[RMDB]
RNA sequence: GGGAACGACUCGAGUAGAGUCGAAAAUAUAUCGAUCUUUGCGGGGAGUCCUGGGCGAGACAUGAGAAGUCUGUCUUCGCUUAGGUACGGCAAUGGUACCACACGACGCACCUUGCGUCGUUGUGUGGUUUUCGCAUGCUCCUUCCGCUGAAGGGGACUAGGGGAUCAUGUUCGCAUGAUCCCCUAGAAAAGAAACAACAACAACAAC
Reactivity to 2A3 in 0.01 (KOAc 150mM, MgCl2 10mM, bicine 150mM(pH8.5), 24C), signal-to-noise 1, nucleotides 027 to 156: u160a030u120a040u060c020g020a000u000c040u060u090u010g000c030g000g120g040g000a030g000u040c000c010u000g030g000g000c000g000a000g010a000c050a090u300g020a130g070a120a050g180u030c020u010g000u020c000u080u070c160g000c000u000u000a000g000g000u080a030c000g020g000c000a010a040u000g000g020u030a000c000c000a000c000a000c010g000a000c000g000c000a060c050c060u180u300g030c140g090u030c000g000u030u000g010u000g000u010g020g000u000u040u180u070c050g010c000a010u000g000c000u020c050c000u060u110c020c020g000c090u090g030a000a020g010g020g040g000a000